[RMDB]
RNA sequence: GGGAACGACUCGAGUAGAGUCGAAAAGAUGAUCAGCAUGAUGAUAAAAAUGAGACAGAGGGACGAAAUUGCCGCGAUAAGAAGGUCCCAUUGGGCGCCCUCGGAGAUGUCGUGGAAGACGGCCGCCUCUGGAAUCAGUCUUCGGACUGAUUCCAGAAAAAGAAACAACAACAACAAC
Reactivity to 2A3 in 0.01 (KOAc 150mM, MgCl2 10mM, bicine 150mM(pH8.5), 24C), signal-to-noise 1, nucleotides 027 to 126: g140a090u220g020a160u000c000a000g110c010a020u000g020a000u000g000a000u260a140a100a000a080a040u130g060a040g060a060c040a030g070a030g000g000g000a000c060g080a010a110a140u130u180g000c000c000g000c050g040a030u010a180a190g040a000a000g000g000u010c000c000c000a000u020u030g000g000g000c000g010c000c030c000u060c140g000g000a020g050a050u130g000u040c100g000u020g000g040a090a000g040a000c020g010g010c000c000g020c000c000
Reactivity to DMS in 0.01 (KOAc 150mM, MgCl2 10mM, bicine 150mM(pH8.5), 24C), signal-to-noise 1, nucleotides 027 to 126: g000a170u120g000a060u000c010a090g020c080a130u060g000a040u000g000a070u030a000a060a110a050a010u030g000a210g050a160c070a040g000a030g000g010g000a070c010g000a050a120a040u000u020g010c000c000g000c000g000a030u020a050a110g020a030a020g000g000u020c070c000c010a240u000u070g040g000g000c140g020c040c020c040u000c050g000g040a050g010a020u040g020u000c020g000u020g000g000a030a020g000a120c030g010g000c050c010g000c000c080
Background
Structure probing data (2A3 and DMS) for a 177-nucleotide construct. 2A3 adducts were read by reverse transcription with SuperScript II with manganese. The data come from the RNA Mapping Database (RMDB), library OK1LIB.